[RMDB]
RNA sequence: GGGAACGACUCGAGUAGAGUCGAAAAUACGCGAGGUUCGCCUCGCGUAAAAGAGGAGCGUAAACGUGAGCGUACGUAGUGCUGUUCAUCGUUCCUACACGAAUGCACAUGGUUUCGACCAUGUGAACUGCCAACUAUCUUUCGAGAUAGUUGGCAGAAAAGAAACAACAACAACAAC
Reactivity to 2A3 in 0.01 (KOAc 150mM, MgCl2 10mM, bicine 150mM(pH8.5), 24C), signal-to-noise 3, nucleotides 027 to 126: u050a000c010g010c000g000a000g000g000u050u110c150g090c040c010u000c000g000c010g010u010a010a000a000a010g080a020g050g010a000g010c020g050u150a100a130a080c050g050u020g050a040g110c040g010u060a010c070g070u090a060g040u060g080c110u200g150u050u000c010a030u070c010g000u000u000c000c000u050a030c090a000c050g140a130a050u200g010c000a000c000a010u020g000g030u010u120u140c210g090a020c010c010a000u000g000u000g000a020a010
Reactivity to DMS in 0.01 (KOAc 150mM, MgCl2 10mM, bicine 150mM(pH8.5), 24C), signal-to-noise 3, nucleotides 027 to 126: u000a020c000g010c000g020a000g030g000u010u030c250g000c010c000u000c010g000c020g000u000a000a030a100a080g000a030g010g000a080g000c010g000u020a100a150a030c040g040u000g010a140g000c190g000u000a030c030g040u000a120g000u000g000c020u010g000u000u010c020a160u000c010g020u020u000c000c000u010a060c300a070c220g000a100a080u020g000c010a000c000a000u000g000g010u010u000u020c250g040a030c000c000a000u000g030u000g000a030a080

The record gives the reactivity of an RNA of 177 nucleotides to 2A3 and DMS. DMS adducts were read by reverse transcription with MarathonRT. The reactions ran in a buffer of 150 mM KOAc, 10 mM MgCl2 and 150 mM bicine (pH 8.5), at 24 C. 2A3 adducts were read by reverse transcription with SuperScript II with manganese.